[RMDB]
RNA sequence: GGGAACGACUCGAGUAGAGUCGAAAAAAUGACUGGGAGAAGGAGGACAGAAGGGAUUGACGGAGAGCAGCUCAGGGAUGUGUUUAAAAGAUGUUGCAAAGGGUCCCUAAGGCGGAAAGGCUUAACCAAUGGGUCAUAUGUUCGCAUAUGACCCAUUAAAAGAAACAACAACAACAAC
Reactivity to DMS in 0.01 (KOAc 150mM, MgCl2 10mM, bicine 150mM(pH8.5), 24C), signal-to-noise 4, nucleotides 027 to 126: a060a060u040g000a030c060u010g010g000g000a060g010a080a060g000g020a100g000g010a080c110a050g010a140a060g010g000g020a050u010u010g020a090c090g020g000a100g000a130g000c070a060g010c020u000c080a080g000g010g000a020u020g010u020g000u010u020u020a050a050a070a080g000a080u000g010u010u000g010c080a060a070a090g000g010g000u010c020c020c010u020a070a050g000g010c020g010g000a050a060a060g010g010c030u010u020a110a100c110c090
Reactivity to 2A3 in 0.01 (KOAc 150mM, MgCl2 10mM, bicine 150mM(pH8.5), 24C), signal-to-noise 2, nucleotides 027 to 126: a000a130u150g010a070c000u040g000g000g000a130g010a030a010g090g030a020g000g120a070c020a030g070a090a050g030g000g000a050u060u110g100a100c130g030g020a060g010a000g100c060a000g000c000u040c050a040g070g090g000a130u050g130u010g020u020u170u110a050a120a030a000g020a050u140g010u040u000g070c140a040a000a130g030g000g010u010c000c000c000u020a000a080g070g000c050g100g000a170a010a000g030g000c020u080u060a000a120c020c010